About this RNA:
An RNA of 177 nucleotides, treated with DMS and 2A3 and read out base by base. Values cover nucleotides 27 to 126. The data come from the RNA Mapping Database (RMDB), libraries RFM100 and RFMREP.
[RMDB]
RNA sequence: GGGAACGACUCGAGUAGAGUCGAAAAAGGUAUGUCACGCGCCAUGAGCACGUGAUGUGCCGUAGGGAAGACGAUAAGCGAGCCGCCUGGGAAGUACGUCUGCAAGGAUGAAACUUAAAGGAAUUGGUAGCUACACAGGUUUCGACCUGUGUAGCUAAAAAGAAACAACAACAACAAC
Reactivity to DMS in 0.01 (KOAc 150mM, MgCl2 10mM, bicine 150mM(pH8.5), 24C), signal-to-noise 2, nucleotides 027 to 126: a150g030g000u010a000u000g000u000c000a020c000g020c010g010c020c050a110u010g030a150g030c000a020c000g050u000g010a000u000g020u000g000c000c020g000u060a050g000g000g030a080a080g000a050c050g000a090u000a060a060g020c020g000a040g050c000c030g000c030c010u000g000g000g000a040a040g020u020a130c060g020u020c000u010g020c170a080a050g000g010a020u000g000a100a040a030c030u000u010a040a080a030g000g020a070a130u010u000g010g010
Reactivity to 2A3 in 0.01 (KOAc 150mM, MgCl2 10mM, bicine 150mM(pH8.5), 24C), signal-to-noise 2, nucleotides 027 to 126: a010g030g000u030a000u000g010u040c000a000c000g000c000g000c010c010a300u260g030a050g080c000a000c010g010u000g000a000u000g000u000g030c020c040g000u040a040g060g010g040a030a090g070a020c130g020a070u060a190a010g050c050g020a000g040c030c000g010c010c010u070g000g000g020a000a050g020u080a010c000g000u000c000u010g050c020a020a000g050g000a060u030g000a170a040a000c020u100u120a070a090a000g050g000a030a090u030u140g060g000
Conditions: 150 mM KOAc, 10 mM MgCl2 and 150 mM bicine (pH 8.5), 24 C.